Chemical mapping of a 177-nucleotide RNA with DMS. It was measured as part of the RMDB library OK2TRN.

RNA sequence: GGGAACGACUCGAGUAGAGUCGAAAACGAGUGAUCGGUGUCCGAGUCUCGUCGGUACGGAGCGAACGCUUAUCAGCGUCUUUCUCCUACGUGGCCGUAUAUGGCGAGUGCGACACGACGUGACCGAAAGAGUGAGCCGUUUCGACGGCUCACUCUUAAAAGAAACAACAACAACAAC
Reactivity to DMS in 0.01 (KOAc 150mM, MgCl2 10mM, bicine 150mM(pH8.5), 24C), signal-to-noise 1, nucleotides 027 to 126: c110g020a070g020u050g000a230u000c060g000g030u000g020u000c020c000g000a140g000u000c000u000c050g000u020c000g000g000u000a020c120g030g000a300g060c170g000a000a050c000g060c000u000u010a250u000c180a130g020c020g050u000c130u000u000u000c000u000c060c100u010a110c080g020u000g000g000c050c000g010u000a010u000a130u020g020g010c020g010a020g010u080g020c220g080a050c050a000c060g000a150c100g000u030g000a240c100c000g000a050